[RMDB]
RNA sequence: GGGAACGACUCGAGUAGAGUCGAAAAAGCAUACCAGCUCGUACGCGAGCUGGUAAGCAAAAAUUGGUGUAGCCUUACCGUAGUAGGCACAAAAACGUCAGCUGGAUCUACGGAUCCAGCUGACGAAAAAAGUGUUUUGUGUUCGCACAAAACACAAGUAGUGAUGCAAGUUCGCUUGCAUCACUACAAAAGAAACAACAACAACAAC
Reactivity to 2A3 in 0.01 (KOAc 150mM, MgCl2 10mM, bicine 150mM(pH8.5), 24C), signal-to-noise 1, nucleotides 027 to 156: a000g030c010a020u000a020c000c010a000g020c000u000c000g050u050a060c210g000c000g100a000g000c000u000g000g000u000a010a000g000c000a060a000a050a000a000u240u240g020g030u090g080u230a030g000c000c000u000u010a010c020c050g020u010a020g000u000a000g000g050c020a010c050a040a060a030a020a000c010g020u000c000a000g000c000u000g000g000a000u000c000u040a070c220g080g030a000u010c000c000a000g000c000u000g000a000c000g020a000a000a000a000a000a000g000u000g000u000u000u000u000g000u000g010u000u040c090g030c080a000c000a000a000a000a000c000a000c000a010a010
Structure probing data (2A3) for a 207-nucleotide construct.
The reactions ran in a buffer of 150 mM KOAc, 10 mM MgCl2 and 150 mM bicine (pH 8.5), at 24 C.
2A3 adducts were read by reverse transcription with SuperScript II with manganese.
The 2A3 profile rests on 1,158 reads.